Conditions: 150 mM KOAc, 10 mM MgCl2 and 150 mM bicine (pH 8.5), 24 C. Structure probing data (2A3 and DMS) for a 170-nucleotide construct. For 2A3 the reverse transcriptase was SuperScript II with manganese. The 2A3 profile rests on 15,319 reads.
RNA sequence: GGGAACGACUCGAGUAGAGUCGAAAAAAGGAGAAAACUACCGGCGGAGGGUGAUCCACUCGGAGUUGGACGGGAAAAGCACAUCCAGAGGACCCCUUCGACGAACAGAAGGAUCUGGUACCGGGGACUAGUCCCAUCUUCGGAUGGGACAAAAGAAACAACAACAACAAC
Reactivity to 2A3 in 0.01 (KOAc 150mM, MgCl2 10mM, bicine 150mM(pH8.5), 24C), signal-to-noise 7, nucleotides 027 to 129: a000a000g110g010a070g030a020a080a020a060c050u090a070c020c000g020g000c010g010g020a020g010g010g010u050g040a210u000c010c030a070c060u050c070g040g010a040g060u120u090g030g040a050c070g010g010g020a040a150a010a010g080c030a030c000a130u020c010c000a000g030a040g030g030a030c010c000c000c000u030u000c020g030a040c010g010a070a010c010a010g030a080a020g050g010a050u040c020u050g030g030u060a070c020c010g000g010g030g010a020c010u040a020
Reactivity to DMS in 0.01 (KOAc 150mM, MgCl2 10mM, bicine 150mM(pH8.5), 24C), signal-to-noise 7, nucleotides 027 to 129: a030a020g010g000a050g020a090a090a180a060c040u020a060c000c040g000g000c110g030g040a040g010g010g050u040g030a110u050c040c020a060c000u010c100g010g010a060g030u020u010g000g000a060c150g040g010g060a060a030a050a060g050c170a050c020a080u040c030c030a070g000a080g000g000a060c090c030c000c010u050u050c010g040a050c090g020a090a110c140a050g040a050a030g050g010a060u000c060u040g010g030u000a040c070c030g010g000g000g000a000c150u030a090